[RMDB]
Conditions: 150 mM KOAc, 10 mM MgCl2 and 150 mM bicine (pH 8.5), 24 C. This 207-nucleotide RNA was probed chemically with 2A3.

RNA sequence: GGGAACGACUCGAGUAGAGUCGAAAAACGCUUCACAAUGUGCGGCAAAGAAACAUUGUUUAUGCAAAGGCACUUCGCAAUGUGUGCUCAAACAUUGCAUAUUCAAACACGCUUCACAAUGUGCGACAAAACUUCACGGUCUUCGGACCGUGAAGAACGUAUUUCGACCGUUCGCGGUCGAAAUACGAAAAGAAACAACAACAACAAC
Reactivity to 2A3 in 0.01 (KOAc 150mM, MgCl2 10mM, bicine 150mM(pH8.5), 24C), signal-to-noise 1, nucleotides 027 to 156: a010c070g000c040u120u040c000a030c010a040a040u000g000u000g040c020g020g000c100a120a140a120g130a080a110a120c050a010u030u010g050u000u010u040a070u070g000c000a000a000a120g070g040c000a010c010u080u130c150g050c270a180a200u160g040u050g010u000g000c000u020c170a070a130a000c060a090u010u000g000c000a000u050a050u030u060c000a000a020a020c070a000c130g000c000u000u080c010a020c010a090a080u060g030u010g020c010g050a050c140a000a110a000a040c000u000u000c000a000c000g050g000u040c000u020u050c070g040g010a010c000c000g000u000g000a010a000g000a000a000